[RMDB]
RNA sequence: GGGAACGACUCGAGUAGAGUCGAAAAGUAAGAUGAUUCGUCAUCUUACGAACCCGAUGAAGCGGCACAUACCGAGCUUCAUACAUCUAAGAGUGCAAAUUAUGGCGCGUGGUUUCGACCACGCGAAGAGUGACAUUGGAUUCGUCCAAUGUCACUCAAAAGAAACAACAACAACAAC
Reactivity to DMS in 0.01 (KOAc 150mM, MgCl2 10mM, bicine 150mM(pH8.5), 24C), signal-to-noise 2, nucleotides 027 to 126: g020u010a000a000g010a000u000g000a010u000u000c210g000u000c000a020u010c000u010u000a000c000g000a090a180c000c000c040g010a060u010g000a010a000g020c000g000g040c060a060c100a090u000a110c100c190g000a120g000c010u000u000c000a020u010a090c050a110u020c110u000a030a070g010a120g030u000g000c090a090a070a080u010u010a100u000g010g000c000g000c000g020u000g000g000u000u010u020c240g000a020c000c000a000c000g000c000g020a000a020
Source: RMDB library M2PK50, as collected in RNAgym. Structure probing data (DMS) for a 177-nucleotide construct. The RNA was probed in 150 mM KOAc, 10 mM MgCl2 and 150 mM bicine (pH 8.5) at 24 C.